[RMDB]
RNA sequence: GGGAACGACUCGAGUAGAGUCGAAAAGGGGCAAGUCUUUUCUGAAUCCAGCGAGAGGCGUGGAGAGAGGGCCGCGGUGCUCUGGAGUAGAGGGUGUGCCUUCGAAACACCAUCGAUCGUCCCUUCUUUUUUACCUUCUUUUGGCUCUUCCGAUGAGACCUCUAGAAGGUUUCGACCUUCUAGAGGUAAAAGAAACAACAACAACAAC
Reactivity to 2A3 in 0.01 (KOAc 150mM, MgCl2 10mM, bicine 150mM(pH8.5), 24C), signal-to-noise 2, nucleotides 027 to 156: g030g020g020g030c090a060a050g060u070c030u050u040u050u020c050u050g080a130a120u190c070c030a060g010c100g100a040g000a000g050g030c080g030u060g010g000a000g000a010g010a020g000g010g000c000c010g000c000g010g010u000g020c010u000c000u000g000g000a000g000u000a000g010a000g040g040g010u150g140u230g300c000c000u020u010c000g010a010a010a000c000a020c150c000a010u000c010g110a300u030c010g000u000c010c000c000u100u160c000u030u060u010u000u060u120a050c000c000u040u140c000u010u040u020u040g000g000c020u010c000u050u020c020c020g020a030u060g010a020g030

An RNA of 207 nucleotides, treated with 2A3 and read out base by base. 2A3 adducts were read by reverse transcription with SuperScript II with manganese. For 2A3, 1,495 sequencing reads were counted. The RNA was probed in 150 mM KOAc, 10 mM MgCl2 and 150 mM bicine (pH 8.5) at 24 C.